Background:
Chemical mapping of a 207-nucleotide RNA with 2A3 and DMS.
RNA sequence: GGGAACGACUCGAGUAGAGUCGAAAAAGAAUUGUACCACCACUGCGUAUCCUAAACGGGCUCUGCAGUGGUUAUUCUUGUAAAGUACUAGCAGUGAAUAGUGGCCCGUAUUGCAGGCAUUAACAUUAAAAGGCAAUCCACUUCGGUGGAUUGCCAAGCAAUAAACGAGGUUCGCCUCGUUUAUUGCAAAAGAAACAACAACAACAAC
Reactivity to 2A3 in 0.01 (KOAc 150mM, MgCl2 10mM, bicine 150mM(pH8.5), 24C), signal-to-noise 2, nucleotides 027 to 156: a020g070a080a060u070u030g060u100a100c000c050a000c000c000a000c010u000g000c010g040u120a180u200c070c010u080a250a120a020c090g000g000g000c080u070c120u190g020c020a010g010u000g000g000u000u000a000u000u010c000u000u080g090u130a030a050a160g080u050a090c030u030a050g040c070a060g070u030g190a180a140u130a120g070u030g110g030c020c000c020g030u010a110u020u180g010c040a020g050g000c040a050u070u120a110a090c010a060u090u170a070a180a080a000g000g000c000a000a000u000c000c000a000c010u070u110c130g070g000u000g000g000a000u000u010g000c000c000a010a000
Reactivity to DMS in 0.01 (KOAc 150mM, MgCl2 10mM, bicine 150mM(pH8.5), 24C), signal-to-noise 1, nucleotides 027 to 156: a080g010a080a020u020u010g000u040a150c070c060a110c010c000a000c000u000g030c040g040u000a050u000c020c020u000a040a100a120c150g010g040g010c050u010c070u020g050c000a040g000u010g000g000u010u000a030u010u000c050u010u000g010u000a090a080a140g010u010a060c030u010a120g010c050a050g020u010g010a070a110u000a100g000u010g010g000c000c030c040g010u000a120u000u010g010c020a020g010g010c050a070u000u000a040a110c080a150u000u000a060a060a090a170g010g010c000a020a010u000c000c000a020c000u000u000c300g000g100u000g000g010a030u000u010g020c010c000a000a020
2A3 adducts were read by reverse transcription with SuperScript II with manganese.
The reactions ran in a buffer of 150 mM KOAc, 10 mM MgCl2 and 150 mM bicine (pH 8.5), at 24 C.